[RMDB]
An RNA of 177 nucleotides, treated with DMS and 2A3 and read out base by base.
For DMS, 1,409 sequencing reads were counted.

RNA sequence: GGGAACGACUCGAGUAGAGUCGAAAAUCAGGAACCUUCGGGUUCCUGAAAAGAACGCUGCAUCGCAAAGCGAGCGCGCCAGAGCGCGCGUACGCGAAGAAAAAAGAAUUGGGUUCGCCCAAUUCAACUCUCAUCUAAGGUUCGCCUUAGAUGAGAGAAAAGAAACAACAACAACAAC
Reactivity to DMS in 0.01 (KOAc 150mM, MgCl2 10mM, bicine 150mM(pH8.5), 24C), signal-to-noise 2, nucleotides 027 to 126: u000c000a010g000g040a030a010c000c000u000u010c210g040g020g010u000u020c000c000u000g000a000a030a070a170g000a170a110c070g000c030u010g020c140a120u000c050g020c020a070a150a070g020c000g020a300g000c000g040c010g020c060c070a140g000a140g000c110g000c000g010c010g020u000a050c210g000c000g000a070a130g020a010a050a080a060a150a120g000a010a000u000u000g000g000g030u000u020c220g040c000c000c000a000a000u000u000c000a070a140
Reactivity to 2A3 in 0.01 (KOAc 150mM, MgCl2 10mM, bicine 150mM(pH8.5), 24C), signal-to-noise 2, nucleotides 027 to 126: u030c010a000g000g010a000a020c000c000u100u170c260g140g010g010u000u000c000c000u000g010a010a000a000a030g020a100a010c060g000c090u100g000c020a110u120c070g010c060a100a100a050g030c020g060a050g060c010g020c000g000c020c020a270g070a060g230c210g010c000g000c000g060u020a010c030g000c020g020a120a070g080a040a120a010a000a000a000g000a000a010u010u010g040g030g000u030u040c230g090c040c010c000a000a010u010u010c000a000a040